[RMDB]
RNA sequence: GGGAACGACUCGAGUAGAGUCGAAAAUUUGACCUAAGCUCUACUAGAGUGCAUAGGAAUGAUGACAUUAGAAGGGAUCAGAUUGCCACUCUAGCAAUGAGGAGUUGCAAGAUCACCAAUGAUCUAGGAUAAAAAUCCGAUUCGUCGGAUUUUUAUCAAAAGAAACAACAACAACAAC
Reactivity to 2A3 in 0.01 (KOAc 150mM, MgCl2 10mM, bicine 150mM(pH8.5), 24C), signal-to-noise 6, nucleotides 027 to 126: u100u030u160g070a000c000c000u010a070a040g030c000u000c000u020a080c020u010a020g000a000g010u040g030c020a030u070a050g090g100a180a120u090g020a030u050g040a050c060a110u110u160a120g140a190a120g080g010g030a000u010c020a010g090a230u000u060g010c040c020a000c000u000c000u010a040g090c090a070a090u120g040a050g080g000a030g010u000u020g040c020a020a040g000a030u020c010a030c180c050a080a100u140g010a000u010c010u020a000g010
Reactivity to DMS in 0.01 (KOAc 150mM, MgCl2 10mM, bicine 150mM(pH8.5), 24C), signal-to-noise 5, nucleotides 027 to 126: u010u020u010g010a220c070c020u000a110a150g000c000u020c000u000a090c030u010a040g010a000g020u010g000c040a050u000a050g000g000a140a080u010g020a010u020g000a120c060a080u010u040a110g010a130a140g000g000g020a040u000c000a040g000a300u020u000g000c100c050a010c000u000c000u010a070g000c120a080a110u010g000a070g000g000a050g030u000u000g000c030a060a040g000a020u000c040a090c190c170a160a090u010g010a020u010c000u000a130g000
An RNA of 177 nucleotides, treated with 2A3 and DMS and read out base by base. The RNA was probed in 150 mM KOAc, 10 mM MgCl2 and 150 mM bicine (pH 8.5) at 24 C. For DMS, 9,427 sequencing reads were counted. For DMS the reverse transcriptase was MarathonRT.